[RMDB]
RNA sequence: GGGAACGACUCGAGUAGAGUCGAAAAGCAGCGGCAGCAAAGGCACUAAGAAGUUCCGGCUGGAGGGGACCCUGCUGAGGACCUACAUCUGCCACAUCAUCUUCAAGACCCUCUUUGAAGUGGGCUUCAUCGUGGGCCACUACUUCCUGUACGGGUACGAUUAGUGCUGAUUCGUCAGCACUAAUCGAAAAGAAACAACAACAACAAC
Reactivity to 2A3 in 0.01 (KOAc 150mM, MgCl2 10mM, bicine 150mM(pH8.5), 24C), signal-to-noise 3, nucleotides 027 to 156: g010c020a000g030c010g060g000c010a010g040c050a080a080a080g040g000c030a030c050u080a090a040g050a020a050g060u050u060c020c020g030g000c030u090g030g020a010g050g020g000g040a100c010c000c020u050g040c010u020g020a160g010g030a040c010c000u040a060c030a090u060c020u040g070c020c020a030c000a050u130c020a050u050c060u100u030c030a030a160g040a230c000c010c030u040c120u110u090u120g040a030a010g000u020g020g010g020c000u060u030c010a190u070c080g060u200g040g020g000c020c000a060c040u120a070c020u040u040c010c000u030g020u060a050c080g000g000g050u070a020
Reactivity to DMS in 0.01 (KOAc 150mM, MgCl2 10mM, bicine 150mM(pH8.5), 24C), signal-to-noise 1, nucleotides 027 to 156: g000c060a060g040c300g000g020c000a080g000c060a060a090a090g020g020c020a020c090u000a160a090g020a110a090g010u010u000c020c070g010g010c000u000g000g020a130g020g010g010g010a190c040c020c000u000g000c010u010g000a150g000g010a090c010c000u000a070c040a110u000c050u000g000c030c040a140c060a270u000c130a060u000c020u000u000c070a110a160g020a050c000c010c010u000c040u000u000u000g010a050a110g060u020g020g020g000c040u010u000c110a070u010c140g000u020g060g020g130c010c040a080c010u010a070c020u000u000c010c000u020g010u010a140c050g000g010g000u000a200